RNA sequence: GGGAACGACUCGAGUAGAGUCGAAAAGUGCCUCGUCGGCCCGGCAUGCCAACCUGAACCGAAGUUCAAGGUGGUUUCUCUGGCCUUCCAGAGAGAUGCGCGUCGGAAGAACCGACGAACAAACCUUAAAACAAAACGACGUUCGCGUCGUUUUGAAGAAUCGUAGUCACUUCGGUGACUACGAUUCAAAAGAAACAACAACAACAAC
Reactivity to 2A3 in 0.01 (KOAc 150mM, MgCl2 10mM, bicine 150mM(pH8.5), 24C), signal-to-noise 2, nucleotides 027 to 156: g070u030g070c020c000u020c000g000u000c010g000g020c040c000c000g000g000c020a020u120g010c020c030a090a070c040c010u000g000a000a000c000c090g080a120a040g020u010u000c060a080a030g010g000u010g010g000u010u070u010c010u000c000u010g040g000c010c100u210u190c010c000a000g000a000g000a000g020a040u160g020c100g010c010g070u020c000g010g020a090a020g020a040a070c000c000g000a000c010g010a030a010c050a030a060a000c020c010u200u280a070a130a000a060c000a000a010a000a000c000g000a000c000g020u060u050c200g000c000g100u020c000g010u010u010u000u000g000a010a000
This 207-nucleotide RNA was probed chemically with 2A3. It was measured as part of the RMDB library M2RFPK.